RNA sequence: GGGAACGACUCGAGUAGAGUCGAAAAGAUAUGGAUAGACGGGAGGUAGCUUGGUGGUAACAUUUGCCACUCGGAAACGAGUGGACCCAAAUGUUACCACCAAGCAGCCUCCCGUCUAUCCUAAGUCGAUAUUCAACAUGUUCGCAUGUUGAAUAUCAAAAGAAACAACAACAACAAC
Reactivity to DMS in 0.01 (KOAc 150mM, MgCl2 10mM, bicine 150mM(pH8.5), 24C), signal-to-noise 1, nucleotides 027 to 126: g000a080u000a300u000g000g000a030u000a040g010a040c010g000g000g000a030g050g040u000a060g010c000u000u010g010g080u000g040g000u000a000a020c000a010u000u000u000g000c010c030a020c000u020c020g000g000a070a100a270c020g030a050g020u000g000g000a290c250c300c010a010a020a030u000g000u000u000a010c000c030a010c000c000a000a000g000c000a070g030c010c000u000c050c010c000g000u000c000u000a000u010c000c000u000a000a040g000u010c130

Conditions: 150 mM KOAc, 10 mM MgCl2 and 150 mM bicine (pH 8.5), 24 C. This 177-nucleotide RNA was probed chemically with DMS. The DMS profile rests on 1,364 reads.